[RMDB]
RNA sequence: GGGAACGACUCGAGUAGAGUCGAAAAGGGUUAGCGUUCGCGCUAACCCCAGGAUCGAACUUGUCAAAUCUCGCAGACAUGAAACGAUCAAAAGCGAGAAAACUAGACAGUCAUUCGUGACUGUCAACAAAAGCGGAGAGUUCGCUCUCCGCUUUUGAAAAGAAACAACAACAACAAC
Reactivity to 2A3 in 0.01 (KOAc 150mM, MgCl2 10mM, bicine 150mM(pH8.5), 24C), signal-to-noise 1, nucleotides 027 to 126: g000g010g000u000u000a000g000c000g030u080u070c210g000c000g000c110u000a010a010c000c010c000c010a050g000g120a040u070c030g010a040a120c040u050u050g020u030c020a010a040a300u080c050u020c090g000c010a010g020a050c000a030u000g050a200a070a060c070g030a020u030c000a120a050a000a000g000c020g000a050g000a010a060a030a070c140u100a090g000a000c000a000g000u010c020a000u030u110c180g030u010g000a020c000u000g000u000c000a020a030
Reactivity to DMS in 0.01 (KOAc 150mM, MgCl2 10mM, bicine 150mM(pH8.5), 24C), signal-to-noise 2, nucleotides 027 to 126: g010g010g000u000u000a010g020c010g040u010u020c160g030c060g060c000u000a010a000c010c000c000c070a070g000g030a120u000c000g030a070a120c070u000u010g010u000c040a080a060a170u030c030u000c010g040c080a070g010a020c030a050u010g010a110a060a120c130g000a070u000c090a030a050a160a180g000c010g000a040g020a080a060a050a110c190u000a140g010a000c000a020g010u000c000a030u000u000c190g010u000g000a010c000u010g000u000c000a030a080